This 177-nucleotide RNA was probed chemically with DMS and 2A3. The data come from the RNA Mapping Database (RMDB), library OK1LIB.
RNA sequence: GGGAACGACUCGAGUAGAGUCGAAAAUGCAGAGUCAUUACUUCCUCCGGAAGCAAAAUUCAGCGACAGGAUUGGACACUCCGGGGAUAAGUUUCCGCUGGCAAAGGCUCAGCGCGAUGCCUUAAGCUCAGUAUGAGUCAUUCGUGACUCAUACUGAAAAAGAAACAACAACAACAAC
Reactivity to DMS in 0.01 (KOAc 150mM, MgCl2 10mM, bicine 150mM(pH8.5), 24C), signal-to-noise 6, nucleotides 027 to 126: u000g020c010a120g020a120g020u040c010a010u010u010a110c100u000u010c110c010u030c020c010g010g000a020a060g010c100a050a060a020a020u000u010c010a100g000c120g010a110c130a060g000g000a010u000u000g000g000a170c300a130c090u000c000c000g000g000g020g010a040u010a030a050g000u010u000u000c000c010g020c030u010g010g040c080a070a070a110g000g000c010u010c020a070g000c090g010c110g000a080u020g010c020c010u000u010a140a140g010c080
Reactivity to 2A3 in 0.01 (KOAc 150mM, MgCl2 10mM, bicine 150mM(pH8.5), 24C), signal-to-noise 9, nucleotides 027 to 126: u050g000c050a020g060a050g300u270c010a020u030u050a030c030u030u010c000c010u040c010c010g000g010a070a020g020c060a050a080a030a050u050u040c030a040g060c020g130a050c080a080g030g030a040u030u040g050g010a030c010a010c080u000c000c000g000g000g010g000a020u060a170a020g010u000u040u000c010c010g010c040u030g030g000c060a120a070a080g070g000c010u020c090a070g040c080g030c070g080a040u220g010c000c000u050u070a080a020g030c010
Reactivities are rounded to 0.1 and cut off at 0 and 3. For DMS the reverse transcriptase was MarathonRT. Reactivities are given for positions 27 through 126.